RNA sequence: GGGAACGACUCGAGUAGAGUCGAAAAGUUCCCUCAUAGCGUGGAGGUUUAACUACGCUCGUUCCCCAUAUCGGUGUGGGCGCACCGGAUUUAUAAAUCAAAGUCCUUUAGGGAACGGAAAGGAACAAAAAUCCAUGGGAGUUCGCUCCCAUGGAAAGAGUCAAUUGAAGUUCGCUUCAAUUGACUCAAAAGAAACAACAACAACAAC
Reactivity to DMS in 0.01 (KOAc 150mM, MgCl2 10mM, bicine 150mM(pH8.5), 24C), signal-to-noise 1, nucleotides 027 to 156: g000u020u000c000c000c000u010c080a080u000a050g020c050g050u010g000g000a180g040g030u010u000u000a090a170c020u000a040c010g020c020u040c000g020u000u000c020c000c000c120a180u010a200u000c020g030g030u000g010u000g000g040g020c020g000c040a020c000c030g020g000a220u010u010u010a120u010a080a000a080u010c050a070a100a070g000u000c000c000u010u000u020a130g020g000g000a040a060c010g000g010a040a070a060g000g000a090a190c010a080a090a080a090a210u010c010c010a020u000g010g110g000a030g040u000u000c300g020c020u010c020c000c000a010u000g000g000a000a000a080
Reactivity to 2A3 in 0.01 (KOAc 150mM, MgCl2 10mM, bicine 150mM(pH8.5), 24C), signal-to-noise 1, nucleotides 027 to 156: g010u000u000c000c050c000u020c030a070u080a000g000c000g000u000g030g020a130g120g010u110u300u040a090a010c000u020a000c020g000c000u000c000g000u000u000c030c000c000c000a030u090a040u110c000g010g010u010g000u050g010g000g000c020g020c030a010c000c030g000g030a010u030u300u030a260u140a050a030a020u060c120a040a000a000g000u010c030c050u020u080u080a040g010g000g010a000a030c060g020g000a050a040a000g060g000a040a000c040a050a190a020a000a040u000c000c000a000u000g000g000g000a020g000u020u050c070g060c020u020c010c000c000a000u020g000g000a000a000a020